This 177-nucleotide RNA was probed chemically with DMS and 2A3.
The RNA was probed in 150 mM KOAc, 10 mM MgCl2 and 150 mM bicine (pH 8.5) at 24 C.
DMS adducts were read by reverse transcription with MarathonRT.
For 2A3 the reverse transcriptase was SuperScript II with manganese.

[RMDB]
RNA sequence: GGGAACGACUCGAGUAGAGUCGAAAAGUUCGAGAGAAAGUCGCGCAGGACCGAGCGCGCAAUGACAGGAUUGCCGAUGUUGCUCCAGGGGGCUUCACCGGCUGCCAUGCGUGCGGUUGAGGAUUCGGCCUAGGUGAUUAUUCGUAAUCACCUAGGCAAAAGAAACAACAACAACAAC
Reactivity to DMS in 0.01 (KOAc 150mM, MgCl2 10mM, bicine 150mM(pH8.5), 24C), signal-to-noise 2, nucleotides 027 to 126: g010u000u020c050g000a060g000a140g050a060a110a040g000u040c080g000c010g050c010a130g020g000a130c010c060g000a030g030c000g000c000g030c030a040a020u050g010a150c180a110g000g050a090u010u030g020c000c020g030a070u030g030u000u000g010c000u000c010c040a220g000g000g020g000g000c010u010u000c010a000c040c010g070g000c000u000g000c000c030a080u000g000c000g030u010g010c040g000g010u010u060g010a170g040g010a090u030u020c130g010
Reactivity to 2A3 in 0.01 (KOAc 150mM, MgCl2 10mM, bicine 150mM(pH8.5), 24C), signal-to-noise 3, nucleotides 027 to 126: g080u070u100c070g040a040g000a000g060a140a120a050g100u060c020g010c000g000c110a100g000g070a020c010c040g050a060g050c000g000c000g000c010a040a180u120g050a060c060a080g130g050a190u120u160g010c000c000g010a010u000g020u050u050g000c000u020c040c030a070g190g000g010g010g090c000u000u000c000a030c000c000g000g000c000u040g020c010c010a020u050g020c010g010u010g030c020g010g030u030u060g020a050g080g040a060u060u040c030g040